[RMDB]
RNA sequence: GGGAACGACUCGAGUAGAGUCGAAAAAGGUUCGCUGUGGUGCAACUCUUAUUAGUAACUAACCCAAAGCAAGUAUAGGAGAACAGGUUUUUAACUAUUUUUAGGCAGAUAAAAAAUAGUAUUUGACAAAAUCGAUUGUCGUUCGCGACAAUCGAAAGAUUGAUCAUGUCUUCGGACAUGAUCAAUCAAAAGAAACAACAACAACAAC
Reactivity to 2A3 in 0.01 (KOAc 150mM, MgCl2 10mM, bicine 150mM(pH8.5), 24C), signal-to-noise 2, nucleotides 027 to 156: a000g070g020u040u030c000g020c030u010g040u040g080g000u040g010c010a020a030c010u000c050u100u110a140u080u070a070g080u040a060a050c040u010a010a080c020c000c030a070a020a030g010c020a030a020g010u050a080u070a130g010g040a030g030a030a030c050a050g010g010u010u040u010u020u000a020a020c000u000a010u000u000u000u000u030a010g090g000c070a050g080a230u140a050a050a000a010a000a000u000a000g010u030a140u050u100u100g040a020c040a020a130a020a080u020c000g000a010u000u000g000u000c030g000u020u070c220g000c010g100a000c000a000a010u000c000g000a000a000a000
Reactivity to DMS in 0.01 (KOAc 150mM, MgCl2 10mM, bicine 150mM(pH8.5), 24C), signal-to-noise 1, nucleotides 027 to 156: a070g030g030u010u000c030g050c010u010g050u010g010g000u000g020c020a070a160c030u000c060u000u000a050u000u030a100g030u010a090a040c040u020a040a140c020c030c020a160a110a090g030c040a030a120g020u010a070u000a050g000g000a040g000a070a090c020a100g000g020u010u010u000u000u000a040a060c010u000a030u000u000u020u000u020a110g000g000c030a090g000a130u020a010a020a060a010a060a010u000a000g030u010a250u000u030u010g010a200c090a070a040a080a160u000c020g000a060u000u010g020u000c010g000u020u000c290g010c000g000a020c030a000a000u010c000g010a000a000a010

This 207-nucleotide RNA was probed chemically with 2A3 and DMS. The 2A3 profile rests on 1,496 reads. Conditions: 150 mM KOAc, 10 mM MgCl2 and 150 mM bicine (pH 8.5), 24 C. It was measured as part of the RMDB library M2RFPK. 2A3 adducts were read by reverse transcription with SuperScript II with manganese.